Conditions: 150 mM KOAc, 10 mM MgCl2 and 150 mM bicine (pH 8.5), 24 C. This 177-nucleotide RNA was probed chemically with 2A3 and DMS. DMS adducts were read by reverse transcription with MarathonRT. Source: RMDB library RFMREP, as collected in RNAgym.
[RMDB]
RNA sequence: GGGAACGACUCGAGUAGAGUCGAAAACCGGCGCGGCGGCGCUGAGCGGCAACUCAGCGGCGGAGCCAUCCAGCGAAGGAAGCAUCUGGUCCGUUGCUAAUCCUUCGGAUGUAAUCAUUGGCGGCGCGAUGGAAAUAUACUUCGGUAUAUUUCCAUCAAAAGAAACAACAACAACAAC
Reactivity to 2A3 in 0.01 (KOAc 150mM, MgCl2 10mM, bicine 150mM(pH8.5), 24C), signal-to-noise 4, nucleotides 027 to 126: c000c010g020g020c030g000c020g070g040c000g010g100c010g000c010u010g000a000g010c050g240g010c040a050a090c030u010c010a000g010c000g080g040c030g020g060a010g000c000c000a000u010c020c010a030g070c020g040a010a010g020g000a010a020g010c000a010u010c040u160g130g070u030c050c060g010u020u010g000c010u030a060a120u010c000c000u000u000c010g000g000a040u030g060u100a090a110u110c070a100u050u080g050g000c020g020g020c010g000c050
Reactivity to DMS in 0.01 (KOAc 150mM, MgCl2 10mM, bicine 150mM(pH8.5), 24C), signal-to-noise 4, nucleotides 027 to 126: c010c010g010g020c020g030c020g000g030c010g020g010c010g020c010u000g000a010g010c020g020g020c290a090a170c030u000c010a020g010c010g010g010c020g000g010a220g000c050c010a030u000c130c030a140g020c060g000a030a020g010g010a050a030g000c000a020u000c020u010g010g010u010c110c090g010u000u000g000c010u000a080a100u000c020c000u000u000c010g020g010a060u000g000u000a110a090u020c100a100u000u000g010g010c020g020g010c030g010c090